The record gives the reactivity of an RNA of 177 nucleotides to 2A3 and DMS. The RNA was probed in 150 mM KOAc, 10 mM MgCl2 and 150 mM bicine (pH 8.5) at 24 C. For 2A3 the reverse transcriptase was SuperScript II with manganese.
RNA sequence: GGGAACGACUCGAGUAGAGUCGAAAAGAAACAGUCAAACCUGUCCUUGAUCUUACUAGCUCUAUUAUAUACCGGGUGGAAUGAAUAACAUGUUCUUUUGCUCUGUGCAUGGAGAUGCCACCAUGCGUUAGGGGAAUUGUUUCGACAAUUCCCCUAAAAAAGAAACAACAACAACAAC
Reactivity to 2A3 in 0.01 (KOAc 150mM, MgCl2 10mM, bicine 150mM(pH8.5), 24C), signal-to-noise 3, nucleotides 027 to 126: g010a010a070a000c010a000g050u060c030a070a060a060c010c000u020g060u000c020c020u000u090g020a030u040c040u010u040a070c020u040a070g060c000u000c020u030a160u150u190a150u160a030u060a150c020c000g030g010g010u040g020g060a000a080u120g030a060a070u160a170a030c070a130u150g030u010u000c000u030u040u040u010g030c030u020c000u030g080u040g020c000a000u000g010g000a040g000a020u110g080c030c000a070c010c000a000u000g010c000g010
Reactivity to DMS in 0.01 (KOAc 150mM, MgCl2 10mM, bicine 150mM(pH8.5), 24C), signal-to-noise 4, nucleotides 027 to 126: g010a090a110a060c090a050g000u000c110a070a090a150c120c010u000g000u000c020c000u000u000g020a090u010c010u000u000a070c090u020a100g000c090u000c020u010a030u020u020a130u020a130u020a050c040c020g010g020g030u000g000g000a050a080u020g000a100a070u040a090a120c170a050u010g000u000u000c030u020u000u020u000g010c040u000c030u000g010u020g030c030a010u000g000g000a080g010a060u020g010c080c090a160c010c010a010u010g010c020g020
Description
Reactivities are given for positions 27 through 126. For DMS the reverse transcriptase was MarathonRT.